[RMDB]
RNA sequence: GGGAACGACUCGAGUAGAGUCGAAAAAAUGCCGCCUCAGUUCCAAGCUCUUUCGUGGCACUGUAAACAGUCCUAUUGAGUUAGGGGCAGUCAACCACGUUGAGAAGCUAAAUUAUCUGGUCGAGAGUUACGAUUCCCUACUUCGGUAGGGAAUCAACACAUGCGAAAAGUUCGCUUUUCGCAUGUGAAAAGAAACAACAACAACAAC
Reactivity to DMS in 0.01 (KOAc 150mM, MgCl2 10mM, bicine 150mM(pH8.5), 24C), signal-to-noise 2, nucleotides 027 to 156: a070a060u000g000c010c050g010c030c030u030c020a140g020u000u000c000c050a160a300g020c000u000c010u000u000u000c030g020u000g000g030c090a010c020u020g040u010a030a120a060c070a160g000u000c000c000u000a060u010u000g000a220g040u020u000a010g010g000g000g020c000a040g020u000c030a020a030c020c010a020c030g020u010u000g020a030g000a080a050g020c030u010a050a020a050u010u000a060u020c040u010g020g020u000c040g000a180g000a120g040u000u000a100c080g020a000u000u000c010c000c000u010a000c010u010u000c260g050g060u000a030g020g000g040a010a010u000c000a050a280
Reactivity to 2A3 in 0.01 (KOAc 150mM, MgCl2 10mM, bicine 150mM(pH8.5), 24C), signal-to-noise 2, nucleotides 027 to 156: a000a000u080g040c030c020g020c010c000u020c000a080g020u080u060c040c020a040a000g010c010u000c000u040u010u010c010g020u030g000g000c130a020c000u000g070u100a070a120a050c040a030g160u030c000c000u040a040u030u130g100a160g170u090u030a010g000g000g060g000c000a000g000u000c010a010a000c010c010a010c030g010u020u070g110a060g020a080a010g000c020u070a030a100a040u190u170a070u050c070u040g050g020u030c050g030a050g010a010g190u030u070a040c070g010a000u010u020c000c000c000u000a000c000u040u000c110g070g000u000a000g000g000g050a000a000u000c000a000a000